[RMDB]
RNA sequence: GGGAACGACUCGAGUAGAGUCGAAAAUAUACAUUAGAAGUCGGCACAACUCCCGACUCGCGGUGAGCGAUGCAGCGUAGCGCGAGCUACGCAGCUGCUGUGCGGACGGCUAGCAAAAGCUAGCCAAAGUAUAACCCAUCUUCGGAUGGGUUAUACUAAAAGAAACAACAACAACAAC
Reactivity to 2A3 in 0.01 (KOAc 150mM, MgCl2 10mM, bicine 150mM(pH8.5), 24C), signal-to-noise 4, nucleotides 027 to 126: u110a000u020a020c080a110u130u130a050g090a290a030g020u010c030g120g020c020a010c010a100a110c060u020c000c010c020g050a020c050u010c040g010c000g070g090u300g030a030g000c030g030a030u090g000c010a010g000c010g000u010a000g000c000g010c040g050a030g000c000u000a000c000g000c010a000g000c000u020g000c000u010g010u020g000c010g030g020a010c020g020g000c000u010a000g000c010a090a210a300a010g000c000u010a000g000c000c000a040a090
Reactivity to DMS in 0.01 (KOAc 150mM, MgCl2 10mM, bicine 150mM(pH8.5), 24C), signal-to-noise 5, nucleotides 027 to 126: u040a110u050a130c110a130u020u030a120g030a110a130g010u000c000g010g000c040a020c010a050a080c070u000c030c000c010g010a160c260u000c070g010c050g000g010u080g000a210g010c010g010a030u010g000c000a040g010c000g020u000a000g000c000g030c300g000a230g010c000u000a000c000g010c020a000g030c010u010g010c090u010g010u000g000c010g000g000a010c020g010g000c000u000a000g000c000a130a060a150a130g010c000u000a000g000c000c020a010a010